[RMDB]
RNA sequence: GGGAACGACUCGAGUAGAGUCGAAAAGAUGGUGUUACACUGUUGGAAGAGCAAACGCUGACCUUCUUGAGGUCUGGCUUCAAGCACUGUUUUGGUGUUGUGGCUGAUACUCUUGGGCAGUGUUUUGCCCUUACUGCAUAUUCGUAUGCAGUAAGGGAAAAGAAACAACAACAACAAC
Reactivity to DMS in 0.01 (KOAc 150mM, MgCl2 10mM, bicine 150mM(pH8.5), 24C), signal-to-noise 6, nucleotides 027 to 126: g010a070u000g010g010u000g010u010u010a090c070a050c040u000g010u010u000g010g020a040a050g010a080g010c080a040a030a030c050g010c050u000g000a110c010c000u010u010c160u000u010g010a010g000g000u000c020u010g020g000c010u000u010c030a070a040g010c010a000c010u000g010u010u010u010u020g010g020u000g000u000u000g000u000g000g010c020u010g000a060u010a060c010u000c010u000u000g010g000g000c000a010g010u000g000u000u000u000u000g000
Reactivity to 2A3 in 0.01 (KOAc 150mM, MgCl2 10mM, bicine 150mM(pH8.5), 24C), signal-to-noise 9, nucleotides 027 to 126: g100a060u180g030g050u070g020u100u080a040c060a020c040u020g020u040u010g080g090a090a040g020a030g080c030a020a000a000c010g000c020u050g150a300c010c000u180u190c050u060u110g020a010g020g000u010c040u060g050g000c000u030u020c040a100a040g050c010a000c010u050g170u300u190u180u300g000g000u000g000u010u020g010u010g000g000c010u010g000a010u080a300c000u010c000u000u020g050g000g000c010a000g000u000g010u010u000u010u020g000
The record gives the reactivity of an RNA of 177 nucleotides to DMS and 2A3. Conditions: 150 mM KOAc, 10 mM MgCl2 and 150 mM bicine (pH 8.5), 24 C.